Record summary: An RNA of 177 nucleotides, treated with DMS and read out base by base. The reactions ran in a buffer of 150 mM KOAc, 10 mM MgCl2 and 150 mM bicine (pH 8.5), at 24 C.

RNA sequence: GGGAACGACUCGAGUAGAGUCGAAAAGAUAUGGAACUCUAAUGUUUAGGCCUUCUAGGGAGAUAUGACUCGGAAACGAGUUAUAUCUUUGAUCUAGAGGCCUAAACAUUAGAGUUCCUAAGUCGCAUCAUGUACUUUCGUUCGCGAAAGUACAUGAAAAAGAAACAACAACAACAAC
Reactivity to DMS in 0.01 (KOAc 150mM, MgCl2 10mM, bicine 150mM(pH8.5), 24C), signal-to-noise 2, nucleotides 027 to 126: g000a020u000a300u010g000g000a010a000c000u000c000u010a000a000u010g000u000u000u000a000g000g020c000c000u020u000c000u000a020g000g030g010a030g000a030u000a000u000g010a010c000u000c010g010g000a110a160a260c000g000a000g020u000u010a010u000a010u000c000u000u000u000g010a090u010c000u000a010g000a030g000g010c000c000u000a010a000a000c000a000u000u000a000g000a030g000u000u010c000c000u000a010a060g010u000c010g010c260a160